[RMDB]
An RNA of 177 nucleotides, treated with DMS and 2A3 and read out base by base. The RNA was probed in 150 mM KOAc, 10 mM MgCl2 and 150 mM bicine (pH 8.5) at 24 C. In probing experiments dimethyl sulfate is read out at A N1 and C N3, which are open when not base-paired. Values cover nucleotides 27 to 126. DMS adducts were read by reverse transcription with MarathonRT. The DMS profile rests on 3,933 reads. It was measured as part of the RMDB library OK2TRN. For 2A3, 3,149 sequencing reads were counted.
RNA sequence: GGGAACGACUCGAGUAGAGUCGAAAACAACUGAUGCUUCCGGAAACUACAUCUACCCAGUUAUUGGACCGGAUGGACAAGCCUUGCCAACUGAUGAAUCUGGAAAGACUGUUUACCCAGUACGCGGUCAAGUGGAGGAAUUCGUUCCUCCACUUGAAAAAGAAACAACAACAACAAC
Reactivity to DMS in 0.01 (KOAc 150mM, MgCl2 10mM, bicine 150mM(pH8.5), 24C), signal-to-noise 4, nucleotides 027 to 126: c110a080a110c100u000g010a060u000g000c040u010u000c020c010g010g000a070a060a140c080u000a110c060a030u000c020u000a140c080c020c020a080g000u010u010a140u000u010g000g020a060c060c050g000g000a050u000g010g000a050c080a060a070g010c020c030u000u000g000c030c040a070a100c080u000g010a110u010g010a070a130u000c030u000g010g010a100a040a040g010a060c030u010g000u000u000u000a150c030c030c030a100g010u010a030c150g030c080g010g020
Reactivity to 2A3 in 0.01 (KOAc 150mM, MgCl2 10mM, bicine 150mM(pH8.5), 24C), signal-to-noise 3, nucleotides 027 to 126: c010a010a010c020u050g030a070u100g040c020u050u000c010c000g000g050a080a050a020c070u130a060c040a050u040c010u090a100c010c000c020a020g010u160u210a160u190u080g050g010a070c050c080g040g040a060u070g010g050a020c030a110a040g060c010c030u050u040g000c030c010a040a040c060u040g020a080u050g020a080a050u010c000u020g020g050a090a030a010g050a070c010u020g060u080u080u060a060c010c010c030a040g070u060a020c120g010c050g080g030